[RMDB]
RNA sequence: GGGAACGACUCGAGUAGAGUCGAAAACGUCCCCGUCGUACAGAAGGGUAACAUAUCUCUCCAAAUAUCUGAGCUUGGGUAUACGGGGAAACCCAACCCCUUGGGAAGAUUGGGUAUAUGGCUAAAUUACAUCGAUUGUACUUCGGUACAAUCGAAAGAGUACGAUUAAGUUCGCUUAAUCGUACUCAAAAGAAACAACAACAACAAC
Reactivity to 2A3 in 0.01 (KOAc 150mM, MgCl2 10mM, bicine 150mM(pH8.5), 24C), signal-to-noise 5, nucleotides 027 to 156: c040g120u050c000c010c010c010g080u100c030g020u090a100c050a110g100a100a080g080g020g020u090a120a030c020a030u080a030u020c090u000c010u000c070c020a080a120a100u170a070u050c040u030g030a020g080c020u020u030g010g010g000u020a020u000a040c020g000g020g000g000a020a030a020c010c000c000a010a040c010c000c000c000u010u040g010g000g000a010a020g020a040u030u050g010g000g010u040a030u000a000u060g060g000c050u080a070a110a100u190u110a060c050a090u020c020g000a000u000u000g000u000a000c000u020u010c090g040g000u000a000c000a000a000u000c000g000a000a000a000
Reactivity to DMS in 0.01 (KOAc 150mM, MgCl2 10mM, bicine 150mM(pH8.5), 24C), signal-to-noise 2, nucleotides 027 to 156: c060g010u010c010c000c000c030g020u010c080g020u010a160c070a150g020a100a090g010g040g080u010a060a080c090a120u000a070u000c030u000c000u010c000c040a030a150a150u000a040u000c080u000g000a290g020c090u000u000g020g020g020u000a150u010a050c100g000g010g040g000a060a120a120c010c000c010a050a090c050c000c000c030u000u010g040g030g030a200a060g010a090u000u000g000g020g010u000a060u000a080u010g020g000c060u000a010a090a110u010u000a070c090a130u010c000g010a010u000u000g020u000a010c000u000u010c290g060g020u000a000c000a000a000u010c000g010a000a010a130